[RMDB]
RNA sequence: GGGAACGACUCGAGUAGAGUCGAAAAGGGAAGUAAGUCCUGUUCAGGGUCAGGCCCGGUUAAUGCUUUAUUAUUUUCUAGUUAUGACAUUUGUGAUGCUAAUUGUUUAUAGCAACAGACAAGAAACCUAUGCAGACUUUAUUUUGACAGUCUGUGAGUACAACGAUUGGUUCGCCAAUCGUUGUACAAAAGAAACAACAACAACAAC
Reactivity to 2A3 in 0.01 (KOAc 150mM, MgCl2 10mM, bicine 150mM(pH8.5), 24C), signal-to-noise 2, nucleotides 027 to 156: g070g000g000a050a030g060u150a060a000g030u040c010c010u000g040u060u130c020a020g010g010g000u050c140a010g070g060c020c000c010g040g000u050u080a050a000u070g040c010u100u100u050a090u170u000a090u090u290u150u020c080u010a080g040u130u120a060u150g080a030c010a050u110u160u050g040u060g060a080u050g040c030u070a060a040u080u080g110u070u110u060a130u000a030g000c000a010a070c000a040g060a010c010a000a060g010a000a020a020c010c000u060a090u280g020c000a000g010a000c000u030u210u130a160u040u300u160u220g100a000c010a000g000u000c000u000g010u000g000a000
Reactivity to DMS in 0.01 (KOAc 150mM, MgCl2 10mM, bicine 150mM(pH8.5), 24C), signal-to-noise 1, nucleotides 027 to 156: g030g030g030a050a090g050u000a070a110g060u000c030c040u000g000u010u010c040a080g000g000g040u010c070a160g020g020c020c100c040g060g000u000u010a080a130u020g000c010u000u000u010a130u030u010a150u000u010u000u020c030u010a160g040u000u000a050u010g010a080c070a160u030u010u000g020u000g010a140u000g030c010u010a020a130u000u000g010u000u000u000a090u000a090g030c050a120a080c020a080g000a090c050a070a190g000a130a050a060c060c010u030a100u010g040c010a050g010a040c010u000u000u010a140u010u000u000u020g010a120c250a060g040u000c000u010g030u040g000a090
This 207-nucleotide RNA was probed chemically with 2A3 and DMS. The 2A3 profile rests on 711 reads. The reactions ran in a buffer of 150 mM KOAc, 10 mM MgCl2 and 150 mM bicine (pH 8.5), at 24 C. Source: RMDB library OK3TST, as collected in RNAgym. 2A3 is a SHAPE reagent: it acylates the 2'-hydroxyl of flexible nucleotides of all four kinds. 2A3 adducts were read by reverse transcription with SuperScript II with manganese.